[RMDB]
An RNA of 207 nucleotides, treated with 2A3 and DMS and read out base by base. For 2A3 the reverse transcriptase was SuperScript II with manganese.
RNA sequence: GGGAACGACUCGAGUAGAGUCGAAAACCGAAUGUUUCGACAUUCGGCCUGAUUGGGGAUUAGCUUAGCUUGGCCUAAAGCUUCGGCCUUUGAAGUCGAGAUCAUUGGUUCAAAUCCAAUAUCCCCUGCCACCCCCACGUCAAAUUCGUUUGACGAACAAUUUGACUGAAUUCGUUCAGUCAAAUUGAAAAGAAACAACAACAACAAC
Reactivity to 2A3 in 0.01 (KOAc 150mM, MgCl2 10mM, bicine 150mM(pH8.5), 24C), signal-to-noise 7, nucleotides 027 to 156: c000c000g010a000a000u010g010u050u120u140c220g110a010c010a000u010u000c000g020g030c010c040u190g040a150u080u140g000g000g000g000a000u010u010a010g010c000u010u000a010g000c020u030u050g020g050c040c010u020a010a000a000g000c000u010u000c000g010g000c010c040u090u080u300g100a100a020g000u010c010g000a000g000a040u240c000a000u010u000g000g000u010u010c000a000a000a010u000c000c000a000a000u000a000u000c000c000c000c000u010g020c010c010a030c000c000c000c000c010a030c010g000u000c000a010a010a040u080u040c120g060u080u030u010g000a010c010g010a060a010
Reactivity to DMS in 0.01 (KOAc 150mM, MgCl2 10mM, bicine 150mM(pH8.5), 24C), signal-to-noise 4, nucleotides 027 to 156: c000c000g010a010a010u000g010u000u000u000c240g020a140c010a020u000u000c000g010g020c010c010u000g010a110u000u010g000g020g030g010a050u000u000a050g010c020u000u000a060g000c070u000u030g030g030c150c020u010a030a040a080g040c040u030u000c060g050g040c010c030u010u000u000g000a060a050g030u000c010g000a040g010a060u000c050a090u000u010g010g010u000u000c110a060a260a130u000c020c000a020a060u000a070u000c020c010c000c000u000g020c030c020a100c010c000c000c020c020a070c020g000u000c000a000a030a100u010u000c270g030u000u000u000g010a020c000g010a120a300
Overview:
The reactions ran in a buffer of 150 mM KOAc, 10 mM MgCl2 and 150 mM bicine (pH 8.5), at 24 C.